[RMDB]
RNA sequence: GGGAACGACUCGAGUAGAGUCGAAAAGUUUUUCUCUUUGUAUCAUCAGAUAGAACUUCAUAAGCUUCAUUUAUCUCUUUAAAUUUUUCUUCCGCCUCUUUAUCUCCAGGAUUUCUAUCUGGAUGGUAUACCGGUCAGUAUUCGUACUGACCGGUAUAAAAGAAACAACAACAACAAC
Reactivity to 2A3 in 0.01 (KOAc 150mM, MgCl2 10mM, bicine 150mM(pH8.5), 24C), signal-to-noise 3, nucleotides 027 to 126: g010u040u020u000u120u010c060u010c000u070u100u130g090u020a050u030c010a000u000c000a000g000a010u000a000g020a010a010c010u070u040c080a120u110a230a040g000c020u060u060c060a150u110u120u100a140u050c050u020c000u080u120u170a110a260a280u180u250u090u030u010c000u050u030c020c020g010c000c010u050c010u040u120u060a080u050c030u020c020c010a000g010g030a070u010u010u000c000u000a000u020c000u010g140g040a020u020g000g010u000
Chemical mapping of a 177-nucleotide RNA with 2A3. For 2A3, 1,223 sequencing reads were counted.